The record gives the reactivity of an RNA of 177 nucleotides to DMS and 2A3. It was measured as part of the RMDB library OK2TST. For DMS, 2,058 sequencing reads were counted.
RNA sequence: GGGAACGACUCGAGUAGAGUCGAAAAGCAUCUUCUCUCGCUUGCUCUUCGGCUUCCCAGUCAUAAUAGUGUCUAUGUCUAUGGCGCCACUCUCAACGUCGAUACCCGCGCUGGCUAGGAACGAGAGUGUAACUCAUCGGUUCGCCGAUGAGUUACAAAAAGAAACAACAACAACAAC
Reactivity to DMS in 0.01 (KOAc 150mM, MgCl2 10mM, bicine 150mM(pH8.5), 24C), signal-to-noise 2, nucleotides 027 to 126: g010c070a050u020c060u000u010c020u000c040u000c040g020c080u000u010g000c030u000c070u000u000c030g020g010c060u000u000c020c020c000a120g020u000c090a060u000a090a090u000a050g010u020g020u010c070u010a080u000g020u000c060u000a080u000g020g010c070g000c040c050a040c060u000c010u000c040a020a190c160g030u000c040g020a200u000a080c020c000c030g000c100g010c030u000g000g020c060u000a090g010g010a040a050c080g000a040g000a050g010
Reactivity to 2A3 in 0.01 (KOAc 150mM, MgCl2 10mM, bicine 150mM(pH8.5), 24C), signal-to-noise 2, nucleotides 027 to 126: g030c010a060u010c060u150u050c040u000c000u000c030g000c050u040u040g000c000u000c020u030u020c030g000g000c000u060u030c000c000c000a000g050u050c040a030u050a300a070u130a170g090u070g090u110c060u080a090u080g040u030c030u070a090u150g010g000c020g010c020c020a040c010u040c010u000c030a010a100c030g080u020c010g040a040u090a210c000c020c020g070c030g000c010u060g000g000c050u040a040g050g000a100a000c050g010a020g020a020g020